[RMDB]
RNA sequence: GGGAACGACUCGAGUAGAGUCGAAAAUGCCUGACGACUUUUCUGGAUGGACACUCCCUCCUAAUGGUGAAUGGAAACUCCCUUUCUCAGUAGCCUCCUUGUAGUUCAUCCCGGUAGCCCAGUGUGAGGAAUAUCCUUUAUUCGUAAAGGAUAUUCCAAAAGAAACAACAACAACAAC
Reactivity to DMS in 0.01 (KOAc 150mM, MgCl2 10mM, bicine 150mM(pH8.5), 24C), signal-to-noise 9, nucleotides 027 to 126: u010g010c020c010u000g020a140c080g000a070c050u000u010u010u000c050u010g010g010a090u010g000g010a110c090a120c080u000c020c010c010u000c030c030u000a090a080u010g010g010u010g000a090a100u020g000g010a070a070a100c120u000c030c020c020u000u000u000c020u000c030a070g010u010a120g000c030c010u000c040c030u000u010g010u010a060g010u000u010c060a080u000c010c010c020g010g020u010a070g000c020c010c020a060g000u010g010u000g010a220
Reactivity to 2A3 in 0.01 (KOAc 150mM, MgCl2 10mM, bicine 150mM(pH8.5), 24C), signal-to-noise 9, nucleotides 027 to 126: u100g030c000c000u030g040a030c040g020a040c030u060u080u090u040c040u080g080g020a060u030g060g010a020c020a020c060u050c010c020c010u020c020c010u110a140a090u130g060g010u060g070a060a070u090g040g070a050a050a050c040u070c010c000c010u000u050u020c070u010c020a070g020u050a030g020c000c000u020c010c010u040u060g060u070a070g020u030u040c010a020u020c020c010c000g020g030u030a030g020c000c010c020a030g030u040g020u040g100a050